[RMDB]
RNA sequence: GGGAACGACUCGAGUAGAGUCGAAAAACCAGCAUCACCCGCUGCGAGGGAGGCUCGCCAUACUGAUCCUGGUAGUAGUUCUCCCGCAUCAUGGUGUUCAGGCUGGAGCAGCGGAAGUAGAGGAUCAGACGAGCAUAGUAUUCGUACUAUGCUCGUCAAAAGAAACAACAACAACAAC
Reactivity to 2A3 in 0.01 (KOAc 150mM, MgCl2 10mM, bicine 150mM(pH8.5), 24C), signal-to-noise 4, nucleotides 027 to 126: a000c010c000a020g060c040a080u080c030a020c010c010c000g000c000u000g020c000g040a080g000g000g000a000g020g010c000u010c000g010c000c000a040u090a190c020u030g020a020u010c010c000u000g030g000u030a160g000u040a000g020u190u180c000u000c000c000c000g000c000a030u060c000a020u150g060g030u070g110u200u180c120a050g170g000c040u030g020g020a010g000c000a000g000c000g020g000a060a060g060u110a040g020a030g020g000a000u010c030a010
Reactivity to DMS in 0.01 (KOAc 150mM, MgCl2 10mM, bicine 150mM(pH8.5), 24C), signal-to-noise 3, nucleotides 027 to 126: a120c010c000a120g020c120a040u020c160a150c090c000c000g070c000u000g000c000g010a110g000g000g030a020g000g000c000u000c000g030c000c010a060u030a170c040u030g000a020u030c000c000u000g000g020u000a070g060u070a000g000u000u060c000u010c000c000c000g000c100a130u090c110a060u010g010g000u030g040u050u020c070a110g000g020c060u000g010g000a300g020c030a030g030c030g000g000a020a060g000u040a070g030a120g030g000a010u010c000a010
This 177-nucleotide RNA was probed chemically with 2A3 and DMS. For DMS the reverse transcriptase was MarathonRT. It was measured as part of the RMDB library OK1LIB. 2A3 adducts were read by reverse transcription with SuperScript II with manganese. The DMS profile rests on 3,764 reads. For 2A3, 3,708 sequencing reads were counted.